RNA sequence: GGGAACGACUCGAGUAGAGUCGAAAAGAGACGGUGAACCUGUGAGUGGAAGCCCGCUUUAUUCACUGGGGUCGACAGCUCUGGGGAGAAAAGGGAGGAUCGGAUGGGAAGAGUAUAUCCCAUGGGAGGAGGUCAAUCUUCGGAUUGACCAAAAGAAACAACAACAACAAC
Reactivity to 2A3 in 0.01 (KOAc 150mM, MgCl2 10mM, bicine 150mM(pH8.5), 24C), signal-to-noise 8, nucleotides 027 to 129: g040a000g010a020c020g010g020u050g010a030a080c010c010u050g030u060g080a030g020u050g020g050a050a010g030c010c010c010g090c040u060u130u110a130u130u120c070a040c100u060g000g000g000g010u060c030g040a020c020a030g010c010u010c030u050g010g010g000g000a040g010a010a080a010a010g030g000g000a030g000g000a030u050c020g020g000a020u050g010g000g000a010a020g030a010g050u050a020u000a030u090c010c000c010a030u050g030g000g000a060g020g030a040
Reactivity to DMS in 0.01 (KOAc 150mM, MgCl2 10mM, bicine 150mM(pH8.5), 24C), signal-to-noise 8, nucleotides 027 to 129: g020a080g000a090c050g020g040u020g010a030a060c060c040u030g030u030g000a070g030u030g000g040a100a110g000c010c030c090g040c060u000u000u000a070u040u020c030a070c040u040g020g010g010g040u000c070g000a100c160a110g020c030u050c040u000g020g010g060g030a050g030a050a050a070a120g000g000g000a030g000g000a040u000c070g000g010a060u000g030g030g020a030a060g010a120g020u050a080u040a090u020c030c010c030a070u040g030g030g010a050g030g020a140
Structure probing data (2A3 and DMS) for a 170-nucleotide construct. 2A3 is a SHAPE reagent: it acylates the 2'-hydroxyl of flexible nucleotides of all four kinds. Conditions: 150 mM KOAc, 10 mM MgCl2 and 150 mM bicine (pH 8.5), 24 C.